[RMDB]
RNA sequence: GGGAACGACUCGAGUAGAGUCGAAAAACAACAUUUUAGCUAAGGUUCAAGAGUCUUAUGAAAAGAAGUCCAACUUCAAAGUGCAGAAUGACAAGUUUAGGUCUAUCAAAUGGGAUUCCAUAAAGACGUACAUCACUGGUAAGUUAGGAAAACAUUGGCGUCUAAAACUUUUCGAAGUUUUAGACGCAAAAGAAACAACAACAACAAC
Reactivity to DMS in 0.01 (KOAc 150mM, MgCl2 10mM, bicine 150mM(pH8.5), 24C), signal-to-noise 1, nucleotides 027 to 156: a100c040a010a060c030a220u010u000u000u010a080g010c070u020a130a110g040g010u010u010c030a030a070g000a110g020u000c030u000u000a090u010g000a050a140a130a210g010a120a110g020u000c010c060a030a080c050u000u010c050a060a080a090g040u010g050c090a050g020a090a070u010g050a070c040a010a040g000u000u010u000a040g000g010u000c010u000a070u000c060a020a100a140u000g000g010g010a150u010u000c050c060a070u000a060a100a020g010a100c030g040u000a000c080a070u020c020a100c020u000g020g020u020a080a040g030u000u000a050g000g000a000a050a050a080c070a150u000u000g050
Reactivity to 2A3 in 0.01 (KOAc 150mM, MgCl2 10mM, bicine 150mM(pH8.5), 24C), signal-to-noise 2, nucleotides 027 to 156: a000c060a040a020c050a100u100u120u100u190a050g000c040u090a140a020g000g020u120u110c040a080a060g040a020g070u020c000u130u080a050u070g090a040a080a030a100g030a020a000g040u030c060c020a090a060c060u040u090c100a060a130a010g000u030g070c050a010g040a190a090u110g020a090c010a070a020g040u110u150u140a090g030g030u000c000u020a060u080c020a060a100a040u040g000g000g050a080u160u060c010c010a010u070a010a070a010g020a020c030g000u020a010c020a080u090c030a020c030u020g010g060u060a040a040g010u020u060a080g040g000a000a180a040a000c040a040u180u220g110

Source: RMDB library OK3TST, as collected in RNAgym. This 207-nucleotide RNA was probed chemically with DMS and 2A3. Reactivities are given for positions 27 through 156. For DMS the reverse transcriptase was MarathonRT. For 2A3 the reverse transcriptase was SuperScript II with manganese.